[RMDB]
RNA sequence: GGGAACGACUCGAGUAGAGUCGAAAAGUUGGCCAGGCUGGUCUUGAACUCCUAGCCUCUGAUCAUCUGCCCGCCUCAGCCUCCCAAAGUGCUCGGAUUACAGGCGUGAGCCGCUGCACCUGGCCAGUAUGUCUAGGUUCUUCGGAACCUAGACAUAAAAAGAAACAACAACAACAAC
Reactivity to DMS in 0.01 (KOAc 150mM, MgCl2 10mM, bicine 150mM(pH8.5), 24C), signal-to-noise 2, nucleotides 027 to 126: g030u010u000g020g010c010c040a050g000g020c100u010g040g010u000c050u000u000g000a090a100c050u000c020c020u000a120g000c040c020u000c060u000g000a110u000c070a040u000c050u000g010c000c040c030g000c030c030u010c050a060g010c020c010u000c010c020c020a030a070a100g020u000g000c000u000c110g000g000a080u000u000a100c030a060g000g010c100g020u000g000a050g010c030c010g020c130u000g000c080a080c010c000u000g010g020c020c020a050g000